[RMDB]
RNA sequence: GGGAACGACUCGAGUAGAGUCGAAAAUCAUAUUCUCCUGGUGUGUAGAACAUAUACGGAGAUUCGUCGUAUAUUUUCGCUAACAUUGAAAUGAAAUUUUCUACAUCUUUGAUACUAACUCUACGUACACCGAGUUCAGCUUCGGCUGAACUCGGUGAAAAGAAACAACAACAACAAC
Reactivity to 2A3 in 0.01 (KOAc 150mM, MgCl2 10mM, bicine 150mM(pH8.5), 24C), signal-to-noise 2, nucleotides 027 to 126: u100c000a000u000a040u060u000c060u040c020c020u060g020g000u010g000u000g000u220a080g000a070a000c000a000u050a000u020a040c000g000g000a060g150a190u150u090c160g060u010c000g110u000a000u000a020u000u000u000u010c050g000c200u220a210a000c000a100u270u270g010a000a010a010u040g070a200a080a180u040u020u000u010c010u000a080c010a150u000c030u000u090u300g040a100u040a080c030u040a030a230c040u050c020u000a060c060g030u110a000